Structure probing data (DMS and 2A3) for a 177-nucleotide construct. The reactions ran in a buffer of 150 mM KOAc, 10 mM MgCl2 and 150 mM bicine (pH 8.5), at 24 C. It was measured as part of the RMDB library OK2TRN. The DMS profile rests on 1,023 reads. For 2A3, 953 sequencing reads were counted.
RNA sequence: GGGAACGACUCGAGUAGAGUCGAAAAGCGGUGCAGGACAGCUUCGCCGAUGGGUUGCUCGAUUGCCCGCAUUACACGCGGCCCGAGGAGUACGAGGGCGUGCGCGUGCCGGACGUGCUGCUCGGCACUGCACUAGUGGCUUCGGCCACUAGUGCAGAAAAGAAACAACAACAACAAC
Reactivity to DMS in 0.01 (KOAc 150mM, MgCl2 10mM, bicine 150mM(pH8.5), 24C), signal-to-noise 1, nucleotides 027 to 126: g030c000g010g000u010g010c010a000g000g010a220c300a040g040c000u000u000c060g010c010c080g020a100u040g020g020g020u000u000g020c040u000c040g000a300u020u010g010c040c020c010g000c060a030u000u000a160c050a030c090g080c020g010g000c060c000c020g000a190g000g000a100g000u000a040c000g040a300g000g000g020c010g000u000g000c030g000c040g000u000g000c050c030g010g000a110c060g000u000g030c000u000g010c020u010c020g020g000c020a100
Reactivity to 2A3 in 0.01 (KOAc 150mM, MgCl2 10mM, bicine 150mM(pH8.5), 24C), signal-to-noise 1, nucleotides 027 to 126: g030c000g070g040u130g030c000a000g000g080a010c010a050g050c000u080u020c130g170c030c010g190a120u300g050g030g040u020u070g000c000u020c090g040a050u000u050g050c000c000c000g000c000a000u020u190a040c080a020c040g040c000g050g020c000c000c050g000a000g040g030a070g030u150a030c000g010a020g010g060g000c040g000u110g000c100g020c030g010u070g170c020c030g100g080a080c040g060u040g000c040u070g040c000u000c000g010g000c040a030